The data come from the RNA Mapping Database (RMDB), library 15KLIB. The record gives the reactivity of an RNA of 170 nucleotides to DMS and 2A3. Reactivities are given for positions 27 through 129. For 2A3, 5,081 sequencing reads were counted. The reactions ran in a buffer of 150 mM KOAc, 10 mM MgCl2 and 150 mM bicine (pH 8.5), at 24 C.
[RMDB]
RNA sequence: GGGAACGACUCGAGUAGAGUCGAAAAUCCCGCCCCUCGGAUGGGCCGCUUCCGGCGAACGAGCCCGAAGAGCGAGUGGGGGAGAACUCCCGAGAGUUGGGAGACAGAAAGAGGGCGAGUGAUCUCGGUGGGCAAACCUUCGGGUUUGCCAAAAGAAACAACAACAACAAC
Reactivity to DMS in 0.01 (KOAc 150mM, MgCl2 10mM, bicine 150mM(pH8.5), 24C), signal-to-noise 5, nucleotides 027 to 129: u020c000c020c010g050c040c000c030c020u010c030g010g010a160u010g050g000g020c080c010g020c130u030u060c000c000g050g010c020g000a060a090c090g000a000g040c040c010c020g070a150a110g010a100g030c120g030a100g060u050g020g000g010g030g020a100g000a070a080c070u010c030c020c030g020a090g030a160g040u030u030g050g000g000a070g030a110c110a090g000a020a040a020g000a080g000g000g060c090g020a040g050u030g020a080u010c020u040c010g010g030u020g010
Reactivity to 2A3 in 0.01 (KOAc 150mM, MgCl2 10mM, bicine 150mM(pH8.5), 24C), signal-to-noise 3, nucleotides 027 to 129: u020c020c000c010g010c000c000c000c000u040c040g030g050a070u040g040g010g010c020c000g000c010u060u030c020c010g030g030c030g040a060a040c030g010a010g000c020c030c000g020a040a000g010a010g040c040g040a030g020u120g000g000g000g000g000a000g010a010a030c020u030c030c000c000g070a060g010a010g120u070u100g000g000g000a000g000a010c000a000g010a010a080a020g000a020g030g010g000c030g020a020g000u140g040a100u000c000u000c020g040g000u110g010